[RMDB]
RNA sequence: GGGAACGACUCGAGUAGAGUCGAAAACGCUGGGCACACCGCGCAACGGUCAGCCGGUACUGUUUGCCGAGGGCUAUGCCACUGCGGCCUCCCUGCACGAAGCCACGGGCCUUCCGGUACUGAUGACGUUACAAUGUGAGUUCGCUCACAUUGUAACAAAAGAAACAACAACAACAAC
Reactivity to DMS in 0.01 (KOAc 150mM, MgCl2 10mM, bicine 150mM(pH8.5), 24C), signal-to-noise 7, nucleotides 027 to 126: c060g020c040u000g020g010g010c030a070c170a080c020c040g010c080g010c060a040a060c030g010g000u000c060a080g020c070c050g010g010u000a050c050u000g000u000u000u010g000c030c040g010a080g010g000g010c110u000a060u000g010c010c020a110c100u000g000c030g020g010c050c040u000c020c030c010u000g010c050a080c090g010a100a110g020c030c050a070c070g000g000g020c050c060u000u000c040c010g010g000u000a060c110u000g010a130u010g010a120c160
Reactivity to 2A3 in 0.01 (KOAc 150mM, MgCl2 10mM, bicine 150mM(pH8.5), 24C), signal-to-noise 6, nucleotides 027 to 126: c020g000c020u050g000g030g010c010a050c000a020c060c010g020c010g000c070a030a030c020g010g030u040c030a010g050c050c020g030g010u050a040c030u040g160u170u100u120g030c050c020g030a150g040g010g000c060u120a040u150g010c010c010a170c080u090g010c020g030g000c000c000u030c000c000c010u020g030c060a060c070g050a060a010g020c010c020a050c070g030g030g000c000c000u070u030c020c010g020g010u050a080c050u110g130a180u130g040a030c070
About this RNA
An RNA of 177 nucleotides, treated with DMS and 2A3 and read out base by base. The reactions ran in a buffer of 150 mM KOAc, 10 mM MgCl2 and 150 mM bicine (pH 8.5), at 24 C. For DMS, 11,370 sequencing reads were counted. The 2A3 profile rests on 12,334 reads. For DMS the reverse transcriptase was MarathonRT.